[RMDB]
RNA sequence: GGGAACGACUCGAGUAGAGUCGAAAAUACAGGGGGUACCCGAUUGAACAGAUUGCUGAGAGGGCGACCUUCGAGGAGACUGCUUUUCUUCUUCUUCACGGUGAACUUCCAACGGACAGCCAACUAAUCCUUUAAACCAUUUCGAUGGUUUAAAGGAAAAAGAAACAACAACAACAAC
Reactivity to DMS in 0.01 (KOAc 150mM, MgCl2 10mM, bicine 150mM(pH8.5), 24C), signal-to-noise 4, nucleotides 027 to 126: u020a120c100a130g010g000g000g000g020u010a080c060c010c020g010a170u000u010g010a080a130c120a080g010a110u010u000g020c070u010g020a110g000a090g000g000g010c070g000a060c050c030u000u000c090g020a070g000g000a050g010a040c150u000g000c080u010u000u000u000c020u020u000c010u000u010c020u010u000c060a070c110g000g000u000g010a050a100c100u000u000c030c020a030a080c100g000g000a060c090a060g000c040c070a080a090c130u000a080a190
Reactivity to 2A3 in 0.01 (KOAc 150mM, MgCl2 10mM, bicine 150mM(pH8.5), 24C), signal-to-noise 1, nucleotides 027 to 126: u160a020c050a000g010g020g020g000g000u010a030c010c010c020g040a100u070u120g020a070a020c030a040g130a180u070u140g050c040u050g050a030g010a010g080g060g000c030g010a050c000c000u000u030c060g020a030g000g020a010g000a020c060u050g040c000u120u100u080u010c030u090u030c000u050u010c000u030u030c000a000c020g010g000u040g020a020a010c030u060u000c040c020a040a010c030g020g020a010c040a020g070c000c000a030a030c030u030a010a100
The record gives the reactivity of an RNA of 177 nucleotides to DMS and 2A3.
The DMS profile rests on 3,584 reads.
For DMS the reverse transcriptase was MarathonRT.
The RNA was probed in 150 mM KOAc, 10 mM MgCl2 and 150 mM bicine (pH 8.5) at 24 C.